[RMDB]
RNA sequence: GGGAACGACUCGAGUAGAGUCGAAAAGACCGUUAGUUCGCUAACGGUCAAAUAAAAUCAGCGGUAACGAGGCGUAAAAUUUUACCGCUGAACGCCUCGUUAAAAACAGGAGCUUCGGCUCCUGUAAUCAUACCAGGAAGUUCGCUUCCUGGUAUGAAAAAGAAACAACAACAACAAC
Reactivity to DMS in 0.01 (KOAc 150mM, MgCl2 10mM, bicine 150mM(pH8.5), 24C), signal-to-noise 3, nucleotides 027 to 126: g020a000c010c000g000u000u000a000g020u000u010c220g040c010u000a010a000c000g000g010u000c000a010a040a030u000a070a070a110a090u000c050a050g000c060g010g010u000a020a010c070g010a030g010g020c040g010u000a020a070a080a130u010u010u010u010a070c040c020g000c080u000g010a070a010c040g010c000c000u000c020g000u010u000a030a070a060a130a040c000a000g000g000a020g000c010u000u010c240g050g010c000u000c000c000u000g000u000a030a070
Reactivity to 2A3 in 0.01 (KOAc 150mM, MgCl2 10mM, bicine 150mM(pH8.5), 24C), signal-to-noise 2, nucleotides 027 to 126: g000a010c000c000g000u000u000a000g000u030u060c200g000c130u000a000a010c010g000g010u000c000a000a020a000u020a000a010a010a050u100c010a020g080c010g050g050u010a020a010c010g020a010g000g010c050g030u040a050a060a060a120u120u250u110u160a050c010c000g000c010u000g010a010a000c010g000c000c030u010c010g000u000u050a020a140a000a000a000c000a000g000g020a010g000c010u060u090c170g090g010c000u000c020c000u000g000u000a000a010
This 177-nucleotide RNA was probed chemically with DMS and 2A3.
For 2A3 the reverse transcriptase was SuperScript II with manganese.
For DMS, 3,012 sequencing reads were counted.
The RNA was probed in 150 mM KOAc, 10 mM MgCl2 and 150 mM bicine (pH 8.5) at 24 C.
It was measured as part of the RMDB library M2PK50.